Structure probing data (DMS and 2A3) for a 177-nucleotide construct.
Source: RMDB library RFM100, as collected in RNAgym.
For DMS, 2,370 sequencing reads were counted.
The reactions ran in a buffer of 150 mM KOAc, 10 mM MgCl2 and 150 mM bicine (pH 8.5), at 24 C.
RNA sequence: GGGAACGACUCGAGUAGAGUCGAAAAAGGGCGAAAGUGGGUACAAGUGGGGUGCUAGACCCCCAAAAAGUCCCCUCAAAAGGGACACAUCUAAGGGCUUGAUAGUCUAUGAUGAAUGACACCAAGAUAGCAGUUGAAAGUUCGCUUUCAACUGCUAAAAAGAAACAACAACAACAAC
Reactivity to DMS in 0.01 (KOAc 150mM, MgCl2 10mM, bicine 150mM(pH8.5), 24C), signal-to-noise 2, nucleotides 027 to 126: a080g000g000g030c120g000a110a020a020g010u020g000g000g000u000a060c070a030a060g010u030g030g000g020g000u000g000c140u010a100g000a040c020c000c000c000c020a000a020a080a050a030g030u000c000c000c000c010u020c250a070a080a130a150g000g040g000a010c010a090c090a020u010c030u020a030a080g000g000g000c000u000u000g050a150u020a000g030u000c000u000a300u040g020a030u000g000a080a070u000g010a100c060a050c140c060a040a060g010a140
Reactivity to 2A3 in 0.01 (KOAc 150mM, MgCl2 10mM, bicine 150mM(pH8.5), 24C), signal-to-noise 2, nucleotides 027 to 126: a000g030g030g010c110g000a130a030a010g020u060g000g070g000u030a020c010a110a000g070u100g140g000g000g000u020g000c000u020a030g020a040c000c000c000c000c000a010a010a010a010a010g000u000c030c000c090c000u000c090a190a290a000a000g020g030g020a020c040a020c000a070u010c020u050a120a110g030g000g000c000u020u130g100a030u200a150g010u000c000u000a060u120g020a000u030g000a030a220u070g110a050c010a000c120c000a030a000g080a050